[RMDB]
RNA sequence: GGGAACGACUCGAGUAGAGUCGAAAAGAUAUGGAUGUACAGGCUAGCUUCGUACUCGGAAACGAGUACAAGCUUGGACCCUGUGACAUCCUAAGUCAAAAGUGCAGUUUGUUCGCAAACUGCACAAGUUACGUUGCAAGUUCGCUUGCAACGUAACAAAAGAAACAACAACAACAAC
Reactivity to DMS in 0.01 (KOAc 150mM, MgCl2 10mM, bicine 150mM(pH8.5), 24C), signal-to-noise 3, nucleotides 027 to 126: g010a060u000a300u000g000g000a010u000g010u000a020c000a000g020g010c110u010a060g010c000u010u010c220g060u000a010c000u000c000g010g000a060a060a170c010g000a020g000u000a000c000a000a010g040c000u000u000g040g020a110c300c000c000u000g000u000g000a010c010a010u000c000c000u000a020a090g010u010c040a110a110a130a180g020u000g010c000a020g020u000u000u000g010u000u000c270g050c020a010a000a020c000u000g000c000a000c010a020a060
Reactivity to 2A3 in 0.01 (KOAc 150mM, MgCl2 10mM, bicine 150mM(pH8.5), 24C), signal-to-noise 2, nucleotides 027 to 126: g020a030u040a010u150g000g010a010u010g000u020a000c000a000g030g050c040u160a040g000c010u150u080c220g000u010a000c010u010c010g010g010a000a040a020c000g000a000g010u010a000c010a000a010g010c000u010u050g060g110a050c040c000c000u000g000u050g070a010c010a010u010c000c000u010a050a010g020u020c020a060a000a070a080g010u010g000c010a000g010u020u000u030g110u020u140c280g020c180a000a030a000c000u000g040c000a000c000a000a000